[RMDB]
RNA sequence: GGGAACGACUCGAGUAGAGUCGAAAAAAGAGGAAUUGGACGUAGUAUUGCGUUACAAUUAGCAGAAGAAGGAUAUAAUGUAGCAGUAAACUAUGCAGGCAGCAAAGAGAAAGCUGAAGCAGUAGUCUCUCUAGCUAAAUUUCGAUUUAGCUAGAGAAAAAGAAACAACAACAACAAC
Reactivity to 2A3 in 0.01 (KOAc 150mM, MgCl2 10mM, bicine 150mM(pH8.5), 24C), signal-to-noise 5, nucleotides 027 to 126: a000a000g100a020g040g020a040a020u020u010g020g010a010c030g000u020a020g110u060a250u190u230g000c000g000u010u030a110c020a010a020u040u030a010g030c040a010g030a100a000g030a060a030g070g020a030u050a010u030a180a120u140g050u070a000g030c030a020g030u160a020a060a040c020u010a030u070g000c030a010g270g000c000a010g010c020a060a140a000g150a070g060a080a060a010g010c010u020g020a030a000g000c010a050g040u070a020g050u030c020
Reactivity to DMS in 0.01 (KOAc 150mM, MgCl2 10mM, bicine 150mM(pH8.5), 24C), signal-to-noise 8, nucleotides 027 to 126: a060a060g000a110g010g010a060a020u000u000g000g000a020c020g030u000a050g020u010a080u010u010g020c010g000u000u000a090c030a020a020u000u000a110g010c060a070g010a090a060g010a070a040g010g010a070u000a070u000a070a090u010g010u000a060g010c040a080g010u000a060a070a070c050u000a020u000g000c040a050g010g000c040a020g000c030a050a060a100g010a140g010a080a080a100g010c030u000g010a060a040g010c030a040g010u000a040g000u010c120